[RMDB]
RNA sequence: GGGAACGACUCGAGUAGAGUCGAAAAUGGCGCAGUGAAACCCGGCAUCGCCAAAUUCCCGGCAAUCUGAUGCAAUUGCGGGGCAUUGCGCGUUAGCUCCUCGCACUCGUCGGCACAGCGCGCGUCAAGUGUAUGGCGUGUUCGCACGCCAUACACUAAAAGAAACAACAACAACAAC
Reactivity to DMS in 0.01 (KOAc 150mM, MgCl2 10mM, bicine 150mM(pH8.5), 24C), signal-to-noise 1, nucleotides 027 to 126: u010g020g020c000g010c030a050g080u020g010a030a090a070c000c010c000g000g040c020a050u000c020g010c050c090a090a060a220u000u000c020c000c020g010g020c070a180a050u000c270u000g030a010u000g000c080a150a100u010u000g050c090g000g040g000g020c090a040u000u000g040c040g010c020g020u000u000a110g000c110u000c010c000u000c150g000c050a040c090u020c050g000u010c090g050g000c010a090c090a090g010c080g000c040g060c100g020u020c120a060
Reactivity to 2A3 in 0.01 (KOAc 150mM, MgCl2 10mM, bicine 150mM(pH8.5), 24C), signal-to-noise 1, nucleotides 027 to 126: u080g090g030c000g090c030a000g010u020g070a200a210a190c010c000c000g010g000c000a010u080c010g000c010c010a010a170a090u200u070c000c010c000g010g010c020a030a110u000c110u200g020a030u020g020c010a030a180u200u190g040c040g030g000g000g000c020a030u000u070g000c050g000c000g020u040u030a010g010c030u050c000c020u060c050g000c030a060c020u090c010g000u030c040g030g020c050a020c010a040g060c050g060c000g010c020g000u010c060a110